[RMDB]
The record gives the reactivity of an RNA of 177 nucleotides to 2A3 and DMS. The reactions ran in a buffer of 150 mM KOAc, 10 mM MgCl2 and 150 mM bicine (pH 8.5), at 24 C. 2A3 adducts were read by reverse transcription with SuperScript II with manganese. It was measured as part of the RMDB library M2PK90.
RNA sequence: GGGAACGACUCGAGUAGAGUCGAAAAGUUAUGGAAAACGUCAUAGCUACCACUACAACAACAAUGCUGGACGGUGAUGGUUCGACUUACUCGAAACCAUCACGUAGUGGUAGUCGUUCCCAUUCAAAUUACCAUCUUCAUUCGUGAAGAUGGUAAUAAAAGAAACAACAACAACAAC
Reactivity to 2A3 in 0.01 (KOAc 150mM, MgCl2 10mM, bicine 150mM(pH8.5), 24C), signal-to-noise 9, nucleotides 027 to 126: g020u020u030a040u110g080g060a100a130a060a070c060g100u070c040a040u040a050g010c000u010a010c000c010a000c010u020a010c010a150a010c000a040a020c030a130a290u230g100c080u130g130g070a050c090g050g000u000g000a010u010g010g020u010u000c000g000a040c070u150u230a090c040u090c010g020a080a050a040c010c000a000u010c000a000c010g000u010a000g000u000g000g000u000a010g000u000c000g000u000u000c000c000c000a000u090u090c030a020a030
Reactivity to DMS in 0.01 (KOAc 150mM, MgCl2 10mM, bicine 150mM(pH8.5), 24C), signal-to-noise 9, nucleotides 027 to 126: g030u000u010a060u000g000g000a090a070a080a080c130g010u000c020a060u000a060g000c000u000a020c000c010a010c010u000a030c020a090a100c130a070a080c190a090a090u010g010c100u000g020g000a080c150g020g020u000g000a010u000g000g010u000u000c000g000a020c270u010u010a090c200u000c000g000a020a030a030c010c000a000u000c010a010c030g010u000a000g020u000g000g010u000a030g010u000c010g010u000u000c000c000c000a140u010u000c120a040a090